Conditions: 150 mM KOAc, 10 mM MgCl2 and 150 mM bicine (pH 8.5), 24 C. This 207-nucleotide RNA was probed chemically with 2A3 and DMS. The data come from the RNA Mapping Database (RMDB), library OK3TST. The 2A3 profile rests on 3,664 reads.
RNA sequence: GGGAACGACUCGAGUAGAGUCGAAAAAGUUCUAGUCCUCACCUAAGAUCAGACUCACAAGGCCCUCAAAGGAAGAGCACUCGGUUGGGCUUUGUGGUGGGGAUGAGUGUCUCAUUUUUAGUCCCAAAUUAAAAACGAGAUUUUGGGCUGUACAUCAGUGAUAAAAUAGUUUCGACUAUUUUAUCACAAAAGAAACAACAACAACAAC
Reactivity to 2A3 in 0.01 (KOAc 150mM, MgCl2 10mM, bicine 150mM(pH8.5), 24C), signal-to-noise 4, nucleotides 027 to 156: a000g060u080u020c020u030a020g020u000c000c000u000c000a010c010c020u100a150a030g030a140u110c120a060g100a150c080u020c040a010c000a000a010g010g000c010c020c010u080c100a120a110a010g080g010a070a080g040a020g060c020a020c030u040c040g120g000u080u040g000g000g000c000u000u000u000g010u010g010g000u010g000g000g000g000a000u020g000a010g010u030g060u010c010u000c040a090u120u110u070u080u220a010g060u140c000c000c000a010a020a010u070u050a050a060a030a030a020c120g030a070g020a140u010u020u020u050g000g000g000c020u040g070u180a100c060a130u120c070a070
Reactivity to DMS in 0.01 (KOAc 150mM, MgCl2 10mM, bicine 150mM(pH8.5), 24C), signal-to-noise 2, nucleotides 027 to 156: a090g000u000u000c060u010a210g010u000c000c000u010c030a050c020c020u000a090a130g030a120u000c060a160g000a170c160u000c010a140c070a020a070g030g020c000c000c000u000c090a080a080a090g010g000a130a110g000a160g000c100a040c030u000c020g010g070u000u000g010g020g010c020u010u000u000g010u010g020g030u000g020g000g000g030a020u000g000a080g030u010g000u020c010u020c010a100u000u000u000u020u000a050g030u010c050c070c100a060a130a080u000u010a030a040a020a050a040c050g000a060g020a110u000u000u010u010g010g010g050c070u010g000u010a090c080a140u000c050a230